[RMDB]
An RNA of 177 nucleotides, treated with 2A3 and DMS and read out base by base. Source: RMDB library OK2TST, as collected in RNAgym. Reactivities are given for positions 27 through 126. For DMS the reverse transcriptase was MarathonRT. 2A3 adducts were read by reverse transcription with SuperScript II with manganese.
RNA sequence: GGGAACGACUCGAGUAGAGUCGAAAAACGGAAGCAUCGACCCAAAGGAGUCGUAACAAAUGCUGCCUUGCCCAAGCGAAGGCACAACCCGUGAUCUUCAAGGGGCGUGGUUUGGUGCAGCUACAGAUAAUCGAUCGCAUUUCGAUGCGAUCGAUUAAAAAGAAACAACAACAACAAC
Reactivity to 2A3 in 0.01 (KOAc 150mM, MgCl2 10mM, bicine 150mM(pH8.5), 24C), signal-to-noise 1, nucleotides 027 to 126: a030c060g050g080a100a020g060c030a040u020c010g050a020c040c020c000a160a050a000g150g010a020g000u020c010g020u040a030a060c010a050a120a010u100g000c000u030g000c020c000u070u100g000c010c000c000a000a040g020c000g040a060a000g060g060c030a000c000a010a120c050c040c080g050u030g080a170u020c000u000u000c020a070a060g000g000g030g020c020g010u090g010g180u100u160u160g110g010u100g010c000a010g020c010u030a040c000a050g090a160
Reactivity to DMS in 0.01 (KOAc 150mM, MgCl2 10mM, bicine 150mM(pH8.5), 24C), signal-to-noise 2, nucleotides 027 to 126: a150c120g000g030a030a140g030c070a180u010c000g000a050c000c020c030a050a180a190g010g000a010g010u000c010g000u000a030a080c190a090a060a020u000g000c040u000g000c000c060u000u010g000c000c000c000a050a070g000c300g000a030a000g010g020c050a030c080a030a130c210c170c130g000u000g010a070u020c010u000u000c000a090a300g000g020g030g000c050g000u000g000g020u000u020u000g030g010u010g010c000a030g010c000u010a130c220a020g010a030